[RMDB]
This 177-nucleotide RNA was probed chemically with DMS and 2A3.
Source: RMDB library OK2TST, as collected in RNAgym.
The reactions ran in a buffer of 150 mM KOAc, 10 mM MgCl2 and 150 mM bicine (pH 8.5), at 24 C.
For 2A3, 4,677 sequencing reads were counted.
RNA sequence: GGGAACGACUCGAGUAGAGUCGAAAAGGCCCGCGCGGCAUUGGCCAAGACCGCCGGCCGCAACCAGUUCUGGGCGCACGGCACGCUGGAUCCCGCUCGGGCGACCGCGUCCGCGCUGGGUCUGGUCCGAUGUGAGACUAUUCGUAGUCUCACAUCGAAAAGAAACAACAACAACAAC
Reactivity to DMS in 0.01 (KOAc 150mM, MgCl2 10mM, bicine 150mM(pH8.5), 24C), signal-to-noise 4, nucleotides 027 to 126: g010g010c010c020c020g030c160g010c020g000g000c020a090u010u010g030g010c010c060a120a140g020a140c180c120g000c030c030g000g000c030c000g020c040a150a080c030c040a060g010u000u000c080u000g020g010g010c070g010c050a070c080g000g010c110a060c130g000c020u010g010g000a140u000c010c000c050g000c080u000c070g000g000g000c040g000a100c100c300g010c020g010u000c010c000g010c100g020c020u010g000g000g000u000c010u000g000g010u000c120
Reactivity to 2A3 in 0.01 (KOAc 150mM, MgCl2 10mM, bicine 150mM(pH8.5), 24C), signal-to-noise 3, nucleotides 027 to 126: g070g020c010c030c000g000c050g000c010g020g010c050a110u110u280g040g010c030c040a070a050g090a130c040c040g010c010c000g030g000c020c010g010c010a020a040c030c010a040g050u150u060c080u190g030g000g010c020g000c010a050c070g040g010c060a010c070g020c020u040g010g000a050u020c000c010c010g030c050u110c070g010g010g000c040g020a050c060c060g210c000g030u000c000c010g000c000g000c020u040g000g000g000u000c000u020g000g020u020c030